[RMDB]
RNA sequence: GGGAACGACUCGAGUAGAGUCGAAAAGGGUGAUGUCUCCUAACCUUUAUCAAUGGGGCCACUCGGUCGUGCUGUGGGUAGAAAUUUUAUUUCGUGCCUACCUUAGACGCUUGUCGUCGGGAGUAUGUGGGACUGAUGAACUUCGGUUCAUCAGUAAUGUUCCUAAUUGUUUCGACAAUUAGGAACAAAAAGAAACAACAACAACAAC
Reactivity to 2A3 in 0.01 (KOAc 150mM, MgCl2 10mM, bicine 150mM(pH8.5), 24C), signal-to-noise 5, nucleotides 027 to 156: g020g000g040u060g030a120u090g060u040c050u060c050c010u060a070a110c020c000u060u070u070a300u180c120a150a160u170g080g000g020g010c010c010a010c010u000c020g020g010u030c020g010u040g030c090u060g000u040g000g010g000u040a030g090a020a050a010u170u280u210u190a150u040u070u100c040g040u100g000c010c000u010a050c010c010u040u050a050g000a020c000g010c050u130u230g110u300c010g000u000c010g010g000g000a050g020u100a110u140g080u120g010g020g020a000c000u010g000a000u000g000a000a000c010u030u030c160g060g000u000u000c010a000u000c000a010g010u010a010a050
Reactivity to DMS in 0.01 (KOAc 150mM, MgCl2 10mM, bicine 150mM(pH8.5), 24C), signal-to-noise 3, nucleotides 027 to 156: g010g000g030u000g000a100u010g010u000c010u000c050c050u000a180a080c040c050u000u000u000a120u010c080a070a100u000g010g020g000g030c010c030a060c020u000c030g010g020u000c020g030u000g000c030u010g010u010g020g020g020u000a290g010a030a050a050u000u000u000u000a070u010u050u000c020g000u000g050c000c010u010a040c010c090u000u000a110g030a050c030g020c060u000u000g030u000c010g000u000c020g010g090g010a130g020u000a070u010g020u010g010g010g000a090c000u000g010a020u000g010a020a020c000u010u000c300g050g000u000u000c000a000u010c000a000g000u000a010a160

The record gives the reactivity of an RNA of 207 nucleotides to 2A3 and DMS. It was measured as part of the RMDB library M2RFPK. The 2A3 profile rests on 2,558 reads. Conditions: 150 mM KOAc, 10 mM MgCl2 and 150 mM bicine (pH 8.5), 24 C. Values cover nucleotides 27 to 156.